[RMDB]
An RNA of 177 nucleotides, treated with DMS and 2A3 and read out base by base. Source: RMDB library OK1LIB, as collected in RNAgym. In probing experiments dimethyl sulfate is read out at A N1 and C N3, which are open when not base-paired. 2A3 adducts were read by reverse transcription with SuperScript II with manganese. The reactions ran in a buffer of 150 mM KOAc, 10 mM MgCl2 and 150 mM bicine (pH 8.5), at 24 C. The 2A3 profile rests on 16,827 reads. Values are in units of 0.01, from 0 to 300, in steps of 10.
RNA sequence: GGGAACGACUCGAGUAGAGUCGAAAACACGAAGGUUGGCUAAUCCUGGUCGGACAUCAGGGGGUUAGUGCACUGGCAUAAGCCAGCUUGGCGCUAAUAGAUACUAAUCGUAGCAUAGCUGAAUAAACGGUAUUAUAUAUUUCGAUAUAUAAUACCGAAAAGAAACAACAACAACAAC
Reactivity to DMS in 0.01 (KOAc 150mM, MgCl2 10mM, bicine 150mM(pH8.5), 24C), signal-to-noise 7, nucleotides 027 to 126: c060a090c150g010a120a150g000g020u000u020g010g000c030u010a060a090u020c030c010u000g010g000u000c110g000g010a230c100a040u010c030a050g000g000g000g000g000u000u000a010g020u010g020c010a150c000u000g000g000c000a200u050a100a120g000c000c000a000g000c230u030u020g020g010c000g010c010u000a000a010u000a080g000a080u020a070c130u010a080a080u010c070g000u010a060g010c050a080u010a070g010c040u010g000a100a080u030a030a090a190
Reactivity to 2A3 in 0.01 (KOAc 150mM, MgCl2 10mM, bicine 150mM(pH8.5), 24C), signal-to-noise 9, nucleotides 027 to 126: c090a010c050g060a100a050g080g010u080u060g050g000c030u050a020a070u040c000c000u020g020g020u060c090g070g080a040c030a070u040c010a030g000g010g000g010g020u010u010a010g000u010g000c000a000c010u000g000g000c040a170u160a300a030g000c000c000a000g010c050u050u080g150g000c000g000c010u010a020a010u050a060g080a030u090a080c040u090a090a070u050c050g040u040a010g010c030a080u070a050g030c040u070g060a130a040u160a140a110a020